[RMDB]
The record gives the reactivity of an RNA of 177 nucleotides to DMS. Reactivities are given for positions 27 through 126. The RNA was probed in 150 mM KOAc, 10 mM MgCl2 and 150 mM bicine (pH 8.5) at 24 C.
RNA sequence: GGGAACGACUCGAGUAGAGUCGAAAAGAUAUGGAUGAUAGAGAAUACAAGCCCUCUGUUGACGAUUCAUAUGUCGGAAACGACAUAAGAAUCGAUGGGAGGCUUGUAUUCUCUAUCAUCCUAAGUCGUGAACUUAUUAGUUCGCUAAUAAGUUCACAAAAGAAACAACAACAACAAC
Reactivity to DMS in 0.01 (KOAc 150mM, MgCl2 10mM, bicine 150mM(pH8.5), 24C), signal-to-noise 4, nucleotides 027 to 126: g010a110u010a300u000g000g010a010u000g000a020u000a000g000a030g000a030a000u000a000c010a000a020g010c020c010c020u000c000u010g020u000u010g010a180c070g010a020u000u000c000a160u010a000u000g000u010c010g000g000a160a090a230c020g000a010c000a000u000a010a060g000a020a000u000c000g000a080u000g000g000g000a110g010g000c000u010u000g000u000a010u000u000c000u000c000u000a000u000c000a010u000c000c000u000a010a090g020u010c100
Notes: The data come from the RNA Mapping Database (RMDB), library TTRINS.